[RMDB]
RNA sequence: GGGAACGACUCGAGUAGAGUCGAAAAAGAUUGACCUAUUGGGGUGUUUCGCGAGUGUGAGAGGGAAGCGCCGCGGCCUGUAUUUCUAGACCUGCCCUUCGCCUGGUUCGUGGCGCCUUGUGACCCCAAUACGGGUUUACUUCGGUAAACCCGUAUUAAAAGAAACAACAACAACAAC
Reactivity to 2A3 in 0.01 (KOAc 150mM, MgCl2 10mM, bicine 150mM(pH8.5), 24C), signal-to-noise 3, nucleotides 027 to 126: a020g120a160u120u130g070a060c010c010u060a140u040u040g010g020g010g010u050g070u000u040u050c110g000c030g010a090g130u110g000u070g050a090g020a060g030g070g020a100a030g030c010g010c010c010g020c010g010g000c010c010u070g050u080a160u040u150u100c030u030a080g060a180c000c020u030g000c010c010c000u040u040c030g060c050c060u030g000g010u060u160c000g000u020g000g010c000g000c000c000u010u000g030u050g040a070c000c000c000c000
Reactivity to DMS in 0.01 (KOAc 150mM, MgCl2 10mM, bicine 150mM(pH8.5), 24C), signal-to-noise 3, nucleotides 027 to 126: a080g000a120u020u010g000a120c020c020u010a060u020u010g020g000g020g010u000g000u000u000u010c000g000c060g010a080g010u030g000u000g000a070g000a120g000g010g020a160a150g010c010g030c020c000g000c000g000g000c030c020u010g010u040a110u010u020u010c100u000a080g000a080c050c050u010g000c010c010c030u000u010c130g000c060c070u020g000g010u020u030c020g030u000g000g040c010g020c000c020u000u020g010u020g000a140c030c000c010c040